[RMDB]
RNA sequence: GGGAACGACUCGAGUAGAGUCGAAAACUCAUGACCACUUGUCCGUAGUUUACAUCUACGUAUCUGCUAAAGAGCGCAGUGGUUCGAAGUGUGUGAUUAAGAUAAUUGAGAGUGGUGGCAAUGUGUUCGGUGACGAAGAAGUAAAGAACCCAUCGACUACAUGAGGAUUCUUCGGAAUCCUCAUGUAAAAAGAAACAACAACAACAAC
Reactivity to DMS in 0.01 (KOAc 150mM, MgCl2 10mM, bicine 150mM(pH8.5), 24C), signal-to-noise 2, nucleotides 027 to 156: c040u000c020a090u010g000a110c010c060a040c070u000u000g040u000c150c010g080u020a020g030u000u000u030a130c100a140u010c000u010a050c020g020u010a090u000c010u000g000c130u000a150a090a080g020a070g030c040g010c040a040g030u030g030g000u000u010c070g010a060a120g010u000g000u000g030u010g000a120u000u010a010a090g030a090u010a020a110u000u000g000a130g010a180g010u010g020g020u010g010g070c030a070a040u000g030u000g040u000u000c070g020g020u000g010a060c020g010a050a050g020a080a050g000u000a070a060a100g030a080a100c020c030c000a170u010c110g010a130c020
Reactivity to 2A3 in 0.01 (KOAc 150mM, MgCl2 10mM, bicine 150mM(pH8.5), 24C), signal-to-noise 2, nucleotides 027 to 156: c010u020c000a070u110g050a000c000c010a010c000u090u150g040u100c050c030g050u030a040g000u010u080u170a170c100a110u090c020u010a000c010g040u050a120u060c050u080g020c040u170a240a100a000g130a040g040c070g010c020a000g010u010g000g000u100u070c070g010a040a020g010u050g000u020g020u010g150a040u070u000a050a030g000a060u110a120a170u090u030g000a030g000a000g130u080g000g000u020g020g000c040a040a090u080g020u000g090u070u140c020g030g000u050g010a000c070g030a010a050g030a110a010g010u040a050a100a010g010a020a070c060c000c000a020u080c040g100a130c060